The data come from the RNA Mapping Database (RMDB), library OK2TRN. This 177-nucleotide RNA was probed chemically with 2A3 and DMS. For DMS, 5,682 sequencing reads were counted.

RNA sequence: GGGAACGACUCGAGUAGAGUCGAAAACGAAGCUGUGGGUGGACACCUUAUGGUGUCCGCGGUAGGAGAGCGUUCCAAGGGCGUCGAAGCAAGACCGGAAGGACUUGUGGAGCGCUUGGAAGUGAGAAUUGUUCUCUUUCUUCGGAAAGAGAACAAUAAAAGAAACAACAACAACAAC
Reactivity to 2A3 in 0.01 (KOAc 150mM, MgCl2 10mM, bicine 150mM(pH8.5), 24C), signal-to-noise 1, nucleotides 027 to 126: c030g080a100a010g000c060u040g010u100g190g000g000u010g000g030a000c000a010c020c000u260u290a180u300g000g020u010g000u000c000c000g000c000g020g020u100a030g000g070a120g020a020g020c040g040u020u000c010c000a010a020g060g080g000c020g070u300c050g130a000a000g010c000a010a000g000a020c000c020g000g100a060a060g020g000a020c000u000u000g010u030g020g020a020g000c050g010c030u000u000g010g000a040a000g070u070g120a070g100a130
Reactivity to DMS in 0.01 (KOAc 150mM, MgCl2 10mM, bicine 150mM(pH8.5), 24C), signal-to-noise 4, nucleotides 027 to 126: c060g000a120a110g020c030u000g010u000g020g010g040u000g010g010a020c000a000c000c000u010u000a130u010g020g010u000g000u000c000c000g020c020g010g010u010a100g000g000a090g000a080g010c010g020u010u000c000c000a030a040g010g020g040c010g000u010c160g000a190a200g000c000a000a010g000a130c000c000g020g040a110a140g010g010a130c010u000u000g000u000g000g010a130g010c000g000c000u010u000g010g000a010a060g000u010g010a130g010a090